[RMDB]
RNA sequence: GGGAACGACUCGAGUAGAGUCGAAAAUGGUGUUAAGUGGAAUAAGUGGAAAAAUAUACAUAUAUGUACAGGGGGCUACAUAUAUGUAUAUGCCCCCUCCGUUCAGUAUAAGUAGGUAUAAGGUGGAAUACCCGAUCAUAUUCGUAUGAUCGGGUAUAAAAGAAACAACAACAACAAC
Reactivity to 2A3 in 0.01 (KOAc 150mM, MgCl2 10mM, bicine 150mM(pH8.5), 24C), signal-to-noise 1, nucleotides 027 to 126: u120g010g000u040g020u200u110a030a020g070u060g000g060a070a060u150a180a000g060u170g050g080a020a050a000a080a020u060a010u020a010c010a000u040a000u010a000u000g000u010a010c080a070g100g000g070g000g040c000u000a020c010a000u010a000u000a000u040g000u020a020u000a010u000g000c000c000c000c000c020u000c030c000g040u030u000c010a000g050u020a060u010a170a040g070u070a040g000g100u110a120u060a260a000g020g010u010g030g000a040
Reactivity to DMS in 0.01 (KOAc 150mM, MgCl2 10mM, bicine 150mM(pH8.5), 24C), signal-to-noise 2, nucleotides 027 to 126: u020g010g010u010g000u000u000a040a100g030u010g010g000a080a050u020a080a080g000u000g010g010a000a060a050a110a030u030a010u010a000c000a030u000a000u010a010u000g000u010a040c090a140g020g000g030g000g040c170u000a010c020a010u000a010u010a010u000g000u000a010u010a010u010g000c030c000c000c030c030u000c020c020g010u010u020c070a070g000u010a050u020a050a070g000u000a060g020g000u000a030u020a090a110g000g030u000g010g030a080
Source information
Chemical mapping of a 177-nucleotide RNA with 2A3 and DMS. Source: RMDB library OK1LIB, as collected in RNAgym. DMS adducts were read by reverse transcription with MarathonRT. The RNA was probed in 150 mM KOAc, 10 mM MgCl2 and 150 mM bicine (pH 8.5) at 24 C.